[RMDB]
RNA sequence: GGGAACGACUCGAGUAGAGUCGAAAAGAUAUGGAAAUCGUGCUACUGGCUAUAAUCUCGGAAACGAGGUAGCCAAACACGAGUUUCCUAAGUCAAAGAUGCGAAGCACUUCGGUGCUUCGCAUCAAGCUAUUAAUAUACUUCGGUAUAUUAAUAGCAAAAGAAACAACAACAACAAC
Reactivity to DMS in 0.01 (KOAc 150mM, MgCl2 10mM, bicine 150mM(pH8.5), 24C), signal-to-noise 3, nucleotides 027 to 126: g000a060u020a300u010g000g010a040a000a040u000c010g030u000g020c040u010a160c260u010g000g010c010u010a030u010a250a130u010c000u000c010g000g020a070a070a140c000g020a010g010g010u000a000g000c000c000a010a040a110c000a000c000g000a040g010u000u000u000c000c000u000a020a140g000u010c030a110a140a100g000a000u000g020c000g000a010a010g000c000a010c010u000u010c160g010g000u010g000c010u000u000c000g000c000a000u000c000a030a130
Reactivity to 2A3 in 0.01 (KOAc 150mM, MgCl2 10mM, bicine 150mM(pH8.5), 24C), signal-to-noise 2, nucleotides 027 to 126: g000a020u080a050u110g010g000a000a000a000u010c000g010u000g010c070u090a300c130u050g010g000c010u040a040u020a300a300u260c020u000c000g040g000a060a050a030c010g000a010g000g010u000a000g000c000c080a030a020a000c000a010c000g010a010g020u000u020u000c000c000u010a090a020g050u040c020a040a120a140g000a000u000g060c020g000a010a030g030c020a000c000u090u130c300g030g000u000g010c020u020u010c010g030c050a010u010c000a000a000
Chemical mapping of a 177-nucleotide RNA with DMS and 2A3. The RNA was probed in 150 mM KOAc, 10 mM MgCl2 and 150 mM bicine (pH 8.5) at 24 C. Values cover nucleotides 27 to 126. For DMS, 3,120 sequencing reads were counted.